[RMDB]
RNA sequence: GGGAACGACUCGAGUAGAGUCGAAAAUCAUUGUUAUCGAUCACGGUGCGCGCGGUAGAACAUGGCAAGCUCUCAAAUCACUUGGUAGGCCACGCUACUCCAGGAACCACGGUGCGCUUGUCUGCCCCCGACUGAAAUCAUUCGUGAUUUCAGUCGGAAAAGAAACAACAACAACAAC
Reactivity to 2A3 in 0.01 (KOAc 150mM, MgCl2 10mM, bicine 150mM(pH8.5), 24C), signal-to-noise 1, nucleotides 027 to 126: u070c000a020u000u210g090u130u220a100u140c080g070a040u050c030a020c090g040g000u010g080c080g000c000g000c000g000g000u010a030g030a150a010c040a120u090g040g010c000a090a000g000c000u000c040u070c110a030a180a110u070c000a040c040u020u020g020g000u040a030g010g140c010c020a060c000g060c020u090a070c000u000c020c010a030g020g020a040a030c000c000a030c020g030g000u040g040c040g040c040u010u050g030u000c040u030g050c010c000c000
Reactivity to DMS in 0.01 (KOAc 150mM, MgCl2 10mM, bicine 150mM(pH8.5), 24C), signal-to-noise 2, nucleotides 027 to 126: u010c050a090u010u000g010u000u010a090u000c070g000a090u000c060a070c090g020g010u000g000c080g040c050g030c040g000g020u000a020g010a070a090c070a040u010g010g010c040a000a040g010c030u000c070u000c090a070a050a070u010c110a060c100u000u010g010g000u000a100g020g000c060c070a050c170g020c030u000a060c090u000c030c020a000g010g000a080a090c120c040a060c140g000g000u000g000c110g010c050u000u000g010u000c010u010g000c040c020c020